[RMDB]
RNA sequence: GGGAACGACUCGAGUAGAGUCGAAAACUCUGGCACAGCGUGAGCGCGUUGGUCCCGGGGGAGGCUUGGGGUCUGUGAUUGCCUUGAAUGCCUUUCUGAGCACACAGCCUGCAGUAGUGGAGAGGGGUCAAGAUGAUUAUGUGGCAUUUAUAAGUGCCCAGUGGACCUUAUUCGUAAGGUCCACUGGAAAAGAAACAACAACAACAAC
Reactivity to 2A3 in 0.01 (KOAc 150mM, MgCl2 10mM, bicine 150mM(pH8.5), 24C), signal-to-noise 1, nucleotides 027 to 156: c030u010c030u010g020g000c070a010c030a020g050c010g060u040g080a090g070c050g000c020g030u070u060g060g010u020c020c000c040g000g020g000g000g010a010g000g020c030u020u040g000g000g000g000u050c020u050g130u040g010a080u040u230g000c000c040u000u030g100a100a050u140g000c090c010u020u170u010c020u040g040a030g080c000a000c000a030c030a000g060c000c000u150g010c110a050g010u230a000g010u020g030g010a040g000a000g000g000g020g000u000c040a050a030g020a040u110g040a010u080u210a060u250g070u160g000g020c010a000u100u150u000a150u040a120a050g070u010g030c010
An RNA of 207 nucleotides, treated with 2A3 and read out base by base. The RNA was probed in 150 mM KOAc, 10 mM MgCl2 and 150 mM bicine (pH 8.5) at 24 C.